The data come from the RNA Mapping Database (RMDB), library OK2TRN. The record gives the reactivity of an RNA of 177 nucleotides to DMS and 2A3. Conditions: 150 mM KOAc, 10 mM MgCl2 and 150 mM bicine (pH 8.5), 24 C. For 2A3 the reverse transcriptase was SuperScript II with manganese.
RNA sequence: GGGAACGACUCGAGUAGAGUCGAAAAUCACUGCUUUGGCACAACAGUCCUGCGAGGUGCUGGAAUUCCGUCUGUUCUCAUCACACGGACAUGGCUGAUCUGUCUCAGUGGUACCUGGGGGCAAAGCGGAGGGAGUACAGUUCGCUGUACUCCCUCCAAAAGAAACAACAACAACAAC
Reactivity to DMS in 0.01 (KOAc 150mM, MgCl2 10mM, bicine 150mM(pH8.5), 24C), signal-to-noise 1, nucleotides 027 to 126: u010c040a030c010u000g000c300u000u000u000g020g040c010a060c060a040a120c040a090g020u010c020c050u010g000c070g000a180g020g000u010g020c080u000g040g010a040a060u010u000c060c120g020u000c090u000g010u000u000c040u000c060a090u000c050a060c090a090c090g000g010a140c080a030u000g000g000c000u010g000a030u000c160u000g010u000c000u000c060a050g040u000g020g020u000a050c060c050u000g020g060g000g020g030c300a020a020a060g050c220
Reactivity to 2A3 in 0.01 (KOAc 150mM, MgCl2 10mM, bicine 150mM(pH8.5), 24C), signal-to-noise 1, nucleotides 027 to 126: u040c000a000c050u010g050c030u090u080u120g000g030c010a030c020a070a110c000a020g000u020c010c020u020g020c000g030a020g080g000u020g020c040u030g000g030a060a060u140u110c040c020g110u040c100u060g010u020u040c060u000c020a100u060c010a050c020a030c050g000g000a010c000a030u060g030g000c010u020g000a090u060c000u010g070u000c040u020c020a030g020u040g010g000u000a050c000c000u010g000g000g000g000g000c050a110a050a060g090c050